[RMDB]
RNA sequence: GGGAACGACUCGAGUAGAGUCGAAAAUGUAGGAGAUCCAGCACAGUUGCCAGCUCCUAGGACUUUGUUGACUAGAGGCACAUUGGAACCAGAAAAUUUCAAUAGUGUCACUAGAUUGAUGUGUAACCCUAUUACUACCGUUCGCGGUAGUAAUAGGAAAAGAAACAACAACAACAAC
Reactivity to DMS in 0.01 (KOAc 150mM, MgCl2 10mM, bicine 150mM(pH8.5), 24C), signal-to-noise 2, nucleotides 027 to 126: u010g020u010a010g020g000a040g000a080u020c040c080a160g000c030a100c180a160g010u000u000g060c010c050a120g010c020u020c020c010u000a040g030g000a100c090u000u000u010g010u000u000g000a170c000u000a000g010a040g030g000c000a000c050a040u000u000g010g000a000a000c030c100a190g000a050a060a040a200u000u000u010c010a030a010u000a090g030u010g010u000c000a080c000u010a010g000a140u010u010g010a080u020g010u000g020u000a080a100c220
Reactivity to 2A3 in 0.01 (KOAc 150mM, MgCl2 10mM, bicine 150mM(pH8.5), 24C), signal-to-noise 1, nucleotides 027 to 126: u230g050u010a050g000g030a030g020a000u000c090c030a030g020c010a040c120a250g090u190u110g000c000c000a030g020c030u000c000c000u000a020g050g000a020c080u190u100u200g000u040u000g070a030c000u000a000g000a050g010g000c000a000c010a010u000u010g050g000a020a040c040c040a080g250a030a120a030a010u030u000u010c010a000a060u080a190g010u020g000u010c020a000c010u010a010g000a110u040u110g070a080u110g010u030g060u070a050a050c000

Structure probing data (DMS and 2A3) for a 177-nucleotide construct. For 2A3 the reverse transcriptase was SuperScript II with manganese. Conditions: 150 mM KOAc, 10 mM MgCl2 and 150 mM bicine (pH 8.5), 24 C. The DMS profile rests on 1,538 reads. In probing experiments dimethyl sulfate is read out at A N1 and C N3, which are open when not base-paired. The data come from the RNA Mapping Database (RMDB), library 15KREP.